[RMDB]
RNA sequence: GGGAACGACUCGAGUAGAGUCGAAAAGCUACUUGGGAGGCUGAGGUGGGAGGAUCUCUUGAGCCCAGGAGGUCGAGGCUGCAGUAAGCCAUGAUCACACCACUGCAUACCAGCUUGGGUGCCAGAGUGAAACCCUGUCUCAAGAAAAAACUCCAAACCUCAUAGUAAUGUUCGCAUUACUAUGAGGAAAAGAAACAACAACAACAAC
Reactivity to DMS in 0.01 (KOAc 150mM, MgCl2 10mM, bicine 150mM(pH8.5), 24C), signal-to-noise 2, nucleotides 027 to 156: g020c030u000a060c100u000u000g010g000g030a050g020g010c050u000g010a090g030g050u000g010g020g000a060g000g010a070u000c000u000c000u010u000g010a170g030c100c020c020a060g000g000a110g020g070u010c070g000a090g000g020c080u000g030c000a130g040u010a090a070g040c010c000a130u000g040a100u020c070a100c010a040c040c030a100c030u000g050c040a160u000a000c050c020a160g010c020u000u020g010g030g060u010g010c100c080a050g000a130g000u010g010a300a110a170c030c000c040u000g000u000c010u010c010a060a120g010a000a050a110a070a060a070c020u000c000c000a030a090a230
Reactivity to 2A3 in 0.01 (KOAc 150mM, MgCl2 10mM, bicine 150mM(pH8.5), 24C), signal-to-noise 3, nucleotides 027 to 156: g030c020u040a010c030u190u060g050g020g010a020g040g000c040u030g030a000g000g000u050g010g000g000a030g030g010a020u010c020u000c000u040u070g030a040g000c000c020c010a020g040g030a030g000g070u070c050g060a100g030g000c020u020g020c020a050g000u100a050a020g020c060c030a070u130g050a050u110c050a020c010a010c110c020a030c040u010g000c010a040u090a230c020c020a030g060c000u060u050g010g000g000u040g090c070c000a010g010a010g000u020g000a030a040a040c010c000c000u010g070u010c000u000c010a020a010g000a030a060a010a010a000a000c040u030c030c030a090a060a070